[RMDB]
RNA sequence: GGGAACGACUCGAGUAGAGUCGAAAAAAAAGAUAUGGACCCAGGCGGAGCGCGUACCCUAAGACAGAGGCUCGGAAACGAGCCUUCGAGGGUACGAACUACGCUGCCAUGGGUCCUAAGUCAAAAAGAGUAGUGAAUACUUCGGUAUUCACUACUCAAAAGAAACAACAACAACAAC
Reactivity to DMS in 0.01 (KOAc 150mM, MgCl2 10mM, bicine 150mM(pH8.5), 24C), signal-to-noise 2, nucleotides 027 to 126: a040a040a100a150g000a040u010a180u010g000g000a010c000c010c000a070g030g010c010g010g000a030g010c150g010c010g010u000a020c020c000c010u000a180a180g010a090c300a110g000a020g020g050c020u010c000g010g010a030a050a100c000g010a020g020c000c000u000u000c030g010a020g030g010g000u030a010c040g000a030a070c050u030a210c070g060c000u000g010c000c020a130u020g020g010g010u010c000c000u000a010a050g000u000c000a070a050a080a030a130